[RMDB]
RNA sequence: GGGAACGACUCGAGUAGAGUCGAAAAGAUAUGGAUGGCAGCGAUAAGUCGGUGUCGGAAACGACACCCGACUUUUGACGCUGCAUCCUAAGUCAAACCCUGAUUGCACUUCGGUGCAAUCAGGGAAGGUAUGGGUAUUCUUCGGAAUACCCAUACCAAAAGAAACAACAACAACAAC
Reactivity to 2A3 in 0.01 (KOAc 150mM, MgCl2 10mM, bicine 150mM(pH8.5), 24C), signal-to-noise 2, nucleotides 027 to 126: g010a000u010a040u070g010g010a010u030g300g110c010a000g000c000g080a130u060a300a010g000u010c010g000g000u010g030u000c010g040g000a040a040a030c000g030a000c000a000c000c040c000g000a010c020u000u010u020u110g030a020c020g000c000u000g020c010a000u010c000c010u000a080a020g050u010c050a090a020a290c000c000c000u000g000a000u030u000g000c020a000c010u040u080c300g100g000u000g010c000a000a000u000c000a000g000g000g010a000a040
Reactivity to DMS in 0.01 (KOAc 150mM, MgCl2 10mM, bicine 150mM(pH8.5), 24C), signal-to-noise 2, nucleotides 027 to 126: g000a030u000a250u000g000g000a010u000g000g020c000a010g020c000g040a100u000a030a020g020u000c010g000g000u000g020u010c010g000g000a070a080a180c000g000a000c020a020c090c090c020g010a010c000u000u020u000u010g000a180c050g000c000u000g020c010a000u000c000c000u000a060a080g000u000c030a120a130a150c000c000c010u000g000a010u010u000g030c000a010c000u010u000c190g010g010u010g000c000a000a000u010c000a000g000g000g020a000a000
The record gives the reactivity of an RNA of 177 nucleotides to 2A3 and DMS.
The 2A3 profile rests on 4,398 reads.
For DMS, 2,042 sequencing reads were counted.
The data come from the RNA Mapping Database (RMDB), library TTRDEL.